[RMDB]
An RNA of 207 nucleotides, treated with 2A3 and read out base by base. The reactions ran in a buffer of 150 mM KOAc, 10 mM MgCl2 and 150 mM bicine (pH 8.5), at 24 C.
RNA sequence: GGGAACGACUCGAGUAGAGUCGAAAAAAAAUCUGUACUUUUAGUAAACAUCUCCGAUGCCUGUAUCCUUUCUUUUUUUUCUUGAAAACAUUGCAUGAUAGUUUACACUGUAAUAACGACCACUGCUUACUUGCCUAUCCUGUAAAAUAUUUGUGCCACUACUAGACUGGUUCGCCAGUCUAGUAGUAAAAGAAACAACAACAACAAC
Reactivity to 2A3 in 0.01 (KOAc 150mM, MgCl2 10mM, bicine 150mM(pH8.5), 24C), signal-to-noise 1, nucleotides 027 to 156: a000a000a000a060u050c060u050g080u100a060c040u060u160u080u180a070g000u100a070a020a000c010a100u030c030u000c010c060g060a020u050g000c030c030u070g050u070a050u070c030c010u100u040u000c080u220u280u030u080u000u020u020u000c120u030u080g080a090a020a030a030c000a030u080u170g030c010a010u090g020a030u040a000g020u020u020u020a020c070a020c070u070g020u020a000a060u020a140a070c030g030a010c000c010a070c060u000g000c030u100u000a030c000u010u090g000c000c000u030a030u040c010c010u120g020u080a050a080a030a020u180a040u080u100u080g110u100g030c030c130

For 2A3, 501 sequencing reads were counted.